[RMDB]
RNA sequence: GGGAACGACUCGAGUAGAGUCGAAAAGGAAUUAGCCCAAACCAAGAGGCUUGCCUCUUGGGGUUGUAGGACACUCUAUACGGAGUUACAAAGGAACGAAGUAGGUGAAGUGGUCUGGAAAGGCCAGGACACGCAUACUAUUCGUAGUAUGCGUGUCAAAAGAAACAACAACAACAAC
Reactivity to DMS in 0.01 (KOAc 150mM, MgCl2 10mM, bicine 150mM(pH8.5), 24C), signal-to-noise 3, nucleotides 027 to 126: g030g020a130a100u020u010a190g030c020c000c020a070a110a210c000c000a020a010g000a030g000g010c020u010u000g030c000c000u000c010u000u000g000g020g000g030u020u000g000u000a100g000g010a100c090a040c030u010c020u000a200u010a040c060g010g000a250g010u000u000a090c140a070a110a130g010g000a020a060c050g000a220a130g000u010a030g010g030u000g000a050a090g020u000g000g030u000c020u000g000g000a060a090a060g000g000c020c030a070g000
The data come from the RNA Mapping Database (RMDB), library OK2TRN.
An RNA of 177 nucleotides, treated with DMS and read out base by base.
The reactions ran in a buffer of 150 mM KOAc, 10 mM MgCl2 and 150 mM bicine (pH 8.5), at 24 C.
For DMS, 1,754 sequencing reads were counted.